[RMDB]
RNA sequence: GGGAACGACUCGAGUAGAGUCGAAAAGCAAGAAAGAAAGUUCAUUGUUUAUCGGAAACUUUAAACUAUAACCAUUCAAACUUUUCCAGAAGUUAGUUUGAAUAGAAAUUAAAAAGAAACUUCUGAAUAACCUUAUCAUGCUUCGGCAUGAUAAGAAGUAAAUACCGCUGUUCGCAGCGGUAUUUACAAAAGAAACAACAACAACAAC
Reactivity to 2A3 in 0.01 (KOAc 150mM, MgCl2 10mM, bicine 150mM(pH8.5), 24C), signal-to-noise 1, nucleotides 027 to 156: g020c000a000a080g000a120a070a040g040a090a120a020g050u050u000c010a020u070u150g020u050u140u130a130u170c060g020g130a020a000a110c020u090u060u110a050a020a000c030u030a000u090a230a020c000c030a000u020u010c000a000a000a000c000u000u000u000u000c050c000a030g000a000a000g010u000u020a000g010u000u010u030g000a010a010u080a130g010a020a040a020u180u180a080a120a000a000a000g000a010a000a000c010u020u000c000u000g000a000a030u060a030a000c000c000u000u000a000u000c000a000u000g000c000u080u020c230g070g020c000a000u000g000a000u000a000a000g000a000a010